[RMDB]
An RNA of 177 nucleotides, treated with DMS and 2A3 and read out base by base. For 2A3, 1,080 sequencing reads were counted. For DMS, 1,107 sequencing reads were counted. 2A3 adducts were read by reverse transcription with SuperScript II with manganese.
RNA sequence: GGGAACGACUCGAGUAGAGUCGAAAAUUUAAGAGCGUAGAUGUCUCUGUCACGAUACGAGUAAGUGACUCUCGUGUACUACUGACGAAUGAGACAGAGACAUUUAUGCUCAGUGUCAGUCAAGGAAAGGUCAGAUAGGUUUCGACCUAUCUGACCUAAAAGAAACAACAACAACAAC
Reactivity to DMS in 0.01 (KOAc 150mM, MgCl2 10mM, bicine 150mM(pH8.5), 24C), signal-to-noise 1, nucleotides 027 to 126: u030u000u010a000a110g000a020g000c000g030u000a020g010a000u000g000u000c000u000c010u030g000u000c000a050c100g020a110u000a070c000g000a050g040u020a040a060g020u000g010a100c060u000c220u010c180g060u020g010u010a050c040u020a060c010u010g000a120c070g000a090a100u010g020a070g030a030c030a010g000a030g010a020c000a010u000u010u000a000u000g000c000u010c000a020g000u000g020u000c060a040g010u000c060a070a090g000g000a070a090
Reactivity to 2A3 in 0.01 (KOAc 150mM, MgCl2 10mM, bicine 150mM(pH8.5), 24C), signal-to-noise 1, nucleotides 027 to 126: u190u150u110a190a070g010a010g020c030g000u010a020g000a040u010g000u010c010u010c010u040g010u000c010a010c090g050a020u050a130c020g010a010g000u000a190a120g040u050g240a110c010u020c010u020c080g050u070g040u070a030c030u010a000c030u080g270a130c020g050a100a110u180g000a040g000a070c020a000g010a000g000a000c000a000u000u000u000a010u000g000c000u030c000a010g000u030g050u000c040a010g020u070c060a030a100g000g050a170a120